[RMDB]
RNA sequence: GGGAACGACUCGAGUAGAGUCGAAAACGCUGGGCACAUACAGCUUCGUAACAGAGCUGAAGCGCGCACGGCGACGAAGUUACGAGGCUGUGUGCCUGUGCUGAAGCGCGCACGGCAACCGAAAGGUGCGAAAGAUACCCUGUUCGCAGGGUAUCAAGAUAAGAAUGGGGUUCGCCCCAUUCUUAUCAAAAGAAACAACAACAACAAC
Reactivity to 2A3 in 0.01 (KOAc 150mM, MgCl2 10mM, bicine 150mM(pH8.5), 24C), signal-to-noise 3, nucleotides 027 to 156: c050g010c010u040g000g010g000c020a000c010a030u300a030c020a080g000c030u000u000c000g000u000a000a020c010a040g030a020g030c010u030g030a130a030g020c010g010c000g000c020a070c040g010g000c000g030a080c050g060a130a010g010u000u010a000c000g000a000g000g000c000u010g010u010g000u010g010c000c000u000g000u010g010c010u060g010a110a030g000c000g000c010g030c010a010c030g040g020c030a060a080c030c000g050a060a030a030g010g010u030g000c010g040a110a110a000g000a000u000a000c000c000c000u000g020u020u080c260g000c110a000g000g000g010u000a000u010c000a000a020
Reactivity to DMS in 0.01 (KOAc 150mM, MgCl2 10mM, bicine 150mM(pH8.5), 24C), signal-to-noise 2, nucleotides 027 to 156: c080g010c010u000g040g030g020c020a060c060a130u000a150c100a000g020c080u000u010c010g000u000a040a070c050a130g010a180g040c020u000g020a120a030g020c000g000c010g050c010a300c030g000g010c000g000a120c140g000a110a190g010u000u000a030c010g010a020g000g030c000u000g000u020g020u010g000c000c010u010g010u010g000c010u000g010a140a080g000c000g020c030g010c000a200c090g040g020c020a070a080c020c000g000a080a180a220g000g020u000g010c040g020a040a070a180g020a040u010a010c010c000c000u010g010u010u010c300g030c000a020g020g030g000u000a000u000c010a050a150
Chemical mapping of a 207-nucleotide RNA with 2A3 and DMS. DMS adducts were read by reverse transcription with MarathonRT. The DMS profile rests on 2,656 reads. The 2A3 profile rests on 4,509 reads. It was measured as part of the RMDB library RNAMAK. For 2A3 the reverse transcriptase was SuperScript II with manganese. Conditions: 150 mM KOAc, 10 mM MgCl2 and 150 mM bicine (pH 8.5), 24 C.